RNA sequence: GGGAACGACUCGAGUAGAGUCGAAAAGAAGAGUUCUUCGAGUUCACAGCGGACGACUACCACCGCGUUGCGGCGGGGCACGCGCGCGAGCGGGCGCAUGCAGAGUCGGGCUUGCGCACGCAGAAGCAAGUUUUCCUAUUUUCGAAUAGGAAAACUUAAAAGAAACAACAACAACAAC
Reactivity to DMS in 0.01 (KOAc 150mM, MgCl2 10mM, bicine 150mM(pH8.5), 24C), signal-to-noise 7, nucleotides 027 to 126: g000a060a060g010a180g020u010u010c020u000u000c020g000a140g010u000u000c050a080c100a140g010c050g000g000a100c050g010a090c050u000a150c060c030a100c050c010g010c010g010u000u010g020c040g020g010c040g000g000g000g000c070a060c050g010c050g020c040g010c060g010a120g020c020g000g000g010c010g000c000a010u000g010c010a080g000a110g010u000c080g010g000g000c000u000u000g000c010g010c010a020c020g010c020a150g010a090a130g000c150
Reactivity to 2A3 in 0.01 (KOAc 150mM, MgCl2 10mM, bicine 150mM(pH8.5), 24C), signal-to-noise 4, nucleotides 027 to 126: g080a030a010g060a050g100u070u080c000u040u040c020g030a020g050u090u080c050a040c020a080g030c030g020g050a060c020g030a050c050u120a130c010c030a060c030c020g040c060g070u070u250g000c030g020g000c010g020g000g050g000c040a020c070g040c000g000c010g010c000g030a030g020c010g000g020g000c000g000c000a010u030g000c010a010g020a020g190u090c040g040g040g000c030u010u020g000c010g000c010a010c010g000c010a020g050a100a020g070c060